RNA sequence: GGGAACGACUCGAGUAGAGUCGAAAAGAUAUGGAGAAGUGCUUUUGACGCGAUUAGAGGUCGGAAACGACCUAUUCUCGCGAUAAGCACCUCCUAAGUCAAACGUUAUCUGUUCGCAGAUAACGAAGCUUUCCAAUAUGUUCGCAUAUUGGAAAGCAAAAGAAACAACAACAACAAC
Reactivity to 2A3 in 0.01 (KOAc 150mM, MgCl2 10mM, bicine 150mM(pH8.5), 24C), signal-to-noise 4, nucleotides 027 to 126: g030a020u110a050u100g050g030a030g020a300a160g050u010g010c010u040u090u120u220g200a120c020g000c000g020a000u000u030a020g010a000g030g000u010c010g000g050a040a080a030c010g000a010c000c000u000a020u000u010c010u000c000g000c000g040a040u010a030a010g000c000a010c010c000u000c000c010u010a110a030g040u030c060a140a050a040c020g000u000u000a010u000c000u010g070u100u070c300g000c090a010g000a010u000a000a000c000g010a040a020
Reactivity to DMS in 0.01 (KOAc 150mM, MgCl2 10mM, bicine 150mM(pH8.5), 24C), signal-to-noise 3, nucleotides 027 to 126: g000a040u000a300u010g010g000a000g010a090a110g030u000g020c000u000u000u000u000g030a220c060g030c000g000a030u000u000a000g000a040g010g020u000c010g000g000a080a090a200c010g000a000c000c000u000a000u000u000c030u010c020g040c000g010a100u000a020a000g020c000a010c000c000u010c000c000u000a050a110g000u000c000a100a140a190c000g000u000u000a000u000c000u000g020u000u000c210g010c010a010g000a000u000a010a000c000g000a060a060